The record gives the reactivity of an RNA of 207 nucleotides to DMS and 2A3. 2A3 adducts were read by reverse transcription with SuperScript II with manganese. The reactions ran in a buffer of 150 mM KOAc, 10 mM MgCl2 and 150 mM bicine (pH 8.5), at 24 C. Reactivities are rounded to 0.1 and cut off at 0 and 3. Source: RMDB library M2RFPK, as collected in RNAgym.

[RMDB]
RNA sequence: GGGAACGACUCGAGUAGAGUCGAAAAUCAUCAAGAAGUAGGCUUAGGCCAAUUGCUCGGUGGUGAAAGUAGAGGGAAGGUAGCACUUCGACGCCUCUAAGUACGCUGUGGGAGUAGUGCUUAAAUCAAAAGCACAGCGACUUCGGUCGCUGUGCAACCAUGUCUGAUGGUUCGCCAUCAGACAUGGAAAAGAAACAACAACAACAAC
Reactivity to DMS in 0.01 (KOAc 150mM, MgCl2 10mM, bicine 150mM(pH8.5), 24C), signal-to-noise 1, nucleotides 027 to 156: u000c010a030u000c020a000a110g000a070a030g020u010a120g000g000c010u020u000a140g070g060c010c010a020a100u000u000g020c000u010c050g030g010u000g000g080u020g020a050a120a220g020u010a070g040a070g030g060g050a120a150g050g000u010a040g000c120a140c060u020u000c030g000a080c060g010c030c000u000c060u000a060a060g020u000a050c020g020c060u000g020u000g020g000g010a210g000u000a060g100u030g030c030u000u050a060a100a180u010c070a080a050a110a200g000c000a010c000a040g000c020g020a020c000u000u000c300g100g010u010c010g000c020u000g030u000g000c010a000a060
Reactivity to 2A3 in 0.01 (KOAc 150mM, MgCl2 10mM, bicine 150mM(pH8.5), 24C), signal-to-noise 2, nucleotides 027 to 156: u040c010a010u010c020a000a020g050a100a030g050u110a040g080g010c040u130u060a070g110g000c030c020a050a060u040u060g020c010u010c010g060g020u050g000g000u040g040a090a040a000g100u100a010g030a020g040g040g040a050a000g020g030u040a030g040c010a030c050u030u030c030g040a040c010g080c010c000u030c020u020a040a060g020u070a020c070g020c070u020g000u100g070g040g000a030g040u090a000g010u020g010c030u040u050a070a100a050u160c120a120a030a010a000g010c010a000c000a000g000c000g000a000c010u020u030c140g110g000u000c000g000c000u000g000u010g000c010a000a000